[RMDB]
RNA sequence: GGGAACGACUCGAGUAGAGUCGAAAAUCCUAAGUCAAGCUUCUACCAGCACGAGUGGAGUAGGGUCGGAAACGACCCUACGUUGAAACUCGUGAACUACUGGUAGGGAGAGCUUGAUAUGGAAAAAGUGCCCAUUUGAUUCGUCAAAUGGGCACAACUGAGAUUGAUGGUUCGCCAUCAAUCUCAGAAAAGAAACAACAACAACAAC
Reactivity to 2A3 in 0.01 (KOAc 150mM, MgCl2 10mM, bicine 150mM(pH8.5), 24C), signal-to-noise 1, nucleotides 027 to 156: u020c020c000u040a190a000g020u000c000a000a000g000c000u300u180c000u230a000c010c170a150g010c160a000c000g000a000g190u000g020g000a040g000u000a000g000g010g010u000c020g040g210a060a100a090c190g010a130c120c200c000u000a000c000g000u070u000g010a000a000a000c000u010c000g000u000g010a000a030c020u270a000c010u000g000g000u000a000g000g020g000a300g010a000g020c000u000u000g010a010u030a090u060g000g040a050a250a050a060a060g000u010g020c000c000c000a000u000u000u000g030a010u030u040c130g050u000c120a000a000a000u000g010g010g030c010a000c000a000a000
An RNA of 207 nucleotides, treated with 2A3 and read out base by base. The reactions ran in a buffer of 150 mM KOAc, 10 mM MgCl2 and 150 mM bicine (pH 8.5), at 24 C. Reactivities are given for positions 27 through 156. Reactivities are rounded to 0.1 and cut off at 0 and 3. Source: RMDB library RNAMAK, as collected in RNAgym.